Chemical mapping of a 207-nucleotide RNA with 2A3. For 2A3, 1,964 sequencing reads were counted.

RNA sequence: GGGAACGACUCGAGUAGAGUCGAAAACCCUCCCUCCGCGGAGUCUCUUCGUCUCGGACCGGCUCAUCUCGACAAGAGGCGGCAGUCCUCAGUGCUCUUACUCUUUUCUGUAAAGAGGAGACUGCUGGACUCGCCGCCCAAGUUCGAGCAUGAGCCAGACGGAUAUAUUCUUCGGAAUAUAUCCGUCAAAAGAAACAACAACAACAAC
Reactivity to 2A3 in 0.01 (KOAc 150mM, MgCl2 10mM, bicine 150mM(pH8.5), 24C), signal-to-noise 3, nucleotides 027 to 156: c000c000c000u010c020c000c010u080c040c040g010c060g080g010a040g140u060c080u020c030u170u050c050g090u050c070u080c160g110g000a100c060c110g000g000c000u000c000a000u010c000u000c000g010a010c010a090a100g070a160g100g010c010g010g040c000a000g000u000c030c000u010c010a060g020u130g240c010u010c020u130u270a300c000u030c000u070u090u090u090c190u300g280u300a020a010a000g020a000g010g000a000g000a000c000u010g050c110u000g000g000a000c010u010c090g000c010c000g000c000c000c000a000a030g000u040u000c000g000a000g000c000a000u000g000a000g010c000c000a000